[RMDB]
RNA sequence: GGGAACGACUCGAGUAGAGUCGAAAAUCUAGGAUGUUCGCAUCCUAGAAAAUACCGAGACUCAACCUCGGUAGAGUUGAGUAACCCUUGGAAAGAAGGGAAAAAGAUGGGGCUUCGGCCCCAUCAAGUUGAUACUCCAGUUCGCUGGAGUAUCAACAAAAGAAACAACAACAACAAC
Reactivity to DMS in 0.01 (KOAc 150mM, MgCl2 10mM, bicine 150mM(pH8.5), 24C), signal-to-noise 1, nucleotides 027 to 126: u010c000u020a000g000g000a010u000g000u000u020c270g010c020a000u000c010c000u020a000g000a000a050a030a140u000a130c010c040g000a120g000a070c040u000c060a040a050c130c010u000c010g000g000u010a020g000a060g000u000u010g000a070g020u000a120a150c010c000c020u000u000g050g000a210a120a120g000a020a000g000g000g000a050a140a050a090a090g000a000u010g000g000g020g000c000u000u000c250g040g000c000c000c000c000a030u000c000a020a040
Chemical mapping of a 177-nucleotide RNA with DMS. The reactions ran in a buffer of 150 mM KOAc, 10 mM MgCl2 and 150 mM bicine (pH 8.5), at 24 C. For DMS the reverse transcriptase was MarathonRT.